The record gives the reactivity of an RNA of 207 nucleotides to 2A3. Values cover nucleotides 27 to 156. For 2A3 the reverse transcriptase was SuperScript II with manganese.
RNA sequence: GGGAACGACUCGAGUAGAGUCGAAAAGCGAGGACGACACGCCACCGGAACAUUACAAGCCCGAUGCGGCGGCGCGGAUCUUGUCGUUCAUCAGAACUAGGCGCGCAGAGCGGCGUCAGACCUCGUUCCUUGCCGUCGUCGACGGUGAAAUCGCCGGUCGUACGUCGACGUUCGCGUCGACGUACGAAAAAGAAACAACAACAACAAC
Reactivity to 2A3 in 0.01 (KOAc 150mM, MgCl2 10mM, bicine 150mM(pH8.5), 24C), signal-to-noise 1, nucleotides 027 to 156: g040c030g030a100g000g040a030c000g000a040c010a010c000g010c000c040a060c000c040g100g010a050a060c050a240u110u150a070c100a130a100g110c030c000c010g140a130u210g040c080g010g000c000g000g020c030g020c010g000g010a080u050c010u050u030g100u070c120g010u060u070c090a100u300c050a140g050a030a020c000u040a040g000g000c010g000c000g000c000a000g000a010g090c070g030g000c000g030u000c000a010g000a300c000c000u000c000g000u000u000c000c000u000u110g000c000c020g000u070c000g050u020c040g000a020c010g000g000u020g040a080a110a030u050c000g070c000c000g100g000